[RMDB]
RNA sequence: GGGAACGACUCGAGUAGAGUCGAAAAGGCUGGACGCUGCACCGAAGGGCCUUCGGUCGGGCAGGGCAACCUGCAGCAGCGUCAUAAAGAGAGGAUCGUGCCGUACCGGGUUACUUGAUACAGCAUUAAAUCCAAGGUAACUCGCCUUGCCUCAGCCCAGACUGAUAAAGUUCGCUUUAUCAGUCUGAAAAGAAACAACAACAACAAC
Reactivity to DMS in 0.01 (KOAc 150mM, MgCl2 10mM, bicine 150mM(pH8.5), 24C), signal-to-noise 3, nucleotides 027 to 156: g010g010c000u000g010g020a030c010g010c000u020g010c010a140c030c010g010a050a060g040g000g030c170c020u000u000c040g000g020u000c060g010g030g030c070a050g000g010g020c170a060a120c000c010u000g000c040a140g000c000a030g030c010g030u000c010a040u000a030a120a150g010a120g000a110g000g000a040u000c100g010u000g000c000c010g020u000a000c020c000g030g020g010u000u010a050c050u010u000g020a030u000a030c010a020g010c050a090u000u000a050a090a070u000c030c030a120a060g020g000u000a030a080c030u000c110g010c030c010u000u000g000c000c020u010c020a120g020c040c030
Reactivity to 2A3 in 0.01 (KOAc 150mM, MgCl2 10mM, bicine 150mM(pH8.5), 24C), signal-to-noise 8, nucleotides 027 to 156: g030g000c030u050g040g000a000c000g010c010u010g000c010a010c000c000g020a020a020g140g050g060c030c000u020u010c020g020g020u070c100g080g130g000c010a010g000g000g000c040a060a140c000c000u010g000c010a020g000c000a000g000c000g000u000c000a000u060a010a070a010g160a010g010a010g040g000a040u140c060g050u070g040c040c030g010u030a050c040c000g000g020g000u070u060a050c020u060u060g030a040u100a150c070a050g090c030a090u120u190a150a110a030u070c080c040a050a020g050g020u020a050a050c020u010c050g020c000c010u020u070g010c000c010u030c020a020g010c010c000
An RNA of 207 nucleotides, treated with DMS and 2A3 and read out base by base. For DMS the reverse transcriptase was MarathonRT.